[RMDB]
RNA sequence: GGGAACGACUCGAGUAGAGUCGAAAACGCGACCUGUUGCGCGACCGCGCGCUGCAUCGCGCCGACGGCCGUCUUCAGGUCGACACCGCGAAUAUCGACGUACACGUAGCCCGACAGCCGCGCAUUAGCACUAUGAGGCGUUCGCGCCUCAUAGUGCAAAAGAAACAACAACAACAAC
Reactivity to DMS in 0.01 (KOAc 150mM, MgCl2 10mM, bicine 150mM(pH8.5), 24C), signal-to-noise 1, nucleotides 027 to 126: c110g000c020g000a050c020c000u020g040u000u000g010c200g020c030g050a010c040c020g020c140g010c020g000c000u000g030c240a080u010c180g020c000g000c070c060g090a180c030g030g020c010c030g000u000c030u010u000c000a000g000g000u000c000g020a010c080a150c110c010g010c100g020a070a140u010a080u010c090g100a030c090g000u000a150c080a020c110g010u000a110g000c060c050c030g000a090c100a190g020c020c050g000c060g000c030a110u000u020a100
Reactivity to 2A3 in 0.01 (KOAc 150mM, MgCl2 10mM, bicine 150mM(pH8.5), 24C), signal-to-noise 1, nucleotides 027 to 126: c120g000c000g000a010c000c010u030g040u010u040g030c100g010c020g050a020c010c020g030c010g030c000g020c050u120g100c070a160u210c100g000c000g020c000c020g160a210c010g010g020c000c000g040u030c010u050u000c000a050g020g000u000c010g000a000c010a020c000c040g050c030g100a070a010u150a030u120c000g130a050c030g080u110a000c060a010c050g030u030a050g030c010c000c000g020a060c000a020g050c020c060g000c020g000c030a090u180u110a020

Conditions: 150 mM KOAc, 10 mM MgCl2 and 150 mM bicine (pH 8.5), 24 C. Chemical mapping of a 177-nucleotide RNA with DMS and 2A3.